The data come from the RNA Mapping Database (RMDB), libraries RFM100 and RFMREP. The record gives the reactivity of an RNA of 177 nucleotides to DMS and 2A3. High DMS reactivity at an A or C suggests that its Watson-Crick edge is free. For 2A3 the reverse transcriptase was SuperScript II with manganese. The reactions ran in a buffer of 150 mM KOAc, 10 mM MgCl2 and 150 mM bicine (pH 8.5), at 24 C.
RNA sequence: GGGAACGACUCGAGUAGAGUCGAAAAUCAGCAGCCCCCUUUUUUUUCAGAGGGUUGUGAACCCGCGUGGGGAUGAGGCCUGGUCUUGUGGAUACUGAACUUAGCUUCGCGGGCCUGACAGCUCUGGGUAUACCUUAGAAUUCGUUCUAAGGUAUACAAAAGAAACAACAACAACAAC
Reactivity to DMS in 0.01 (KOAc 150mM, MgCl2 10mM, bicine 150mM(pH8.5), 24C), signal-to-noise 9, nucleotides 027 to 126: u010c140a180g010c020a040g000c000c000c000c010c010u000u000u000u010u020u020u020u010c110a020g000a050g010g000g010u000u010g010u000g000a100a110c010c000c000g010c100g020u010g000g000g010g000a070u010g010a060g000g010c020c020u000g010g010u010c040u000u020g020u030g010g000a070u010a080c080u010g010a060a070c050u010u020a140g000c160u000u000c030g020c030g000g010g010c010c010u000g000a070c090a080g000c040u010c020u010g000g020
Reactivity to 2A3 in 0.01 (KOAc 150mM, MgCl2 10mM, bicine 150mM(pH8.5), 24C), signal-to-noise 9, nucleotides 027 to 126: u080c010a000g050c010a010g000c000c000c000c000c020u030u040u070u070u050u020u090u080c030a030g020a030g020g000g000u010u010g020u030g030a040a060c000c000c000g020c030g050u100g000g050g010g020a050u090g040a020g010g030c010c010u050g020g030u050c040u110u220g090u130g090g020a060u090a230c030u060g030a090a010c020u060u060a030g050c010u030u020c030g010c000g020g010g030c000c000u020g020a010c020a030g020c000u020c020u060g090g010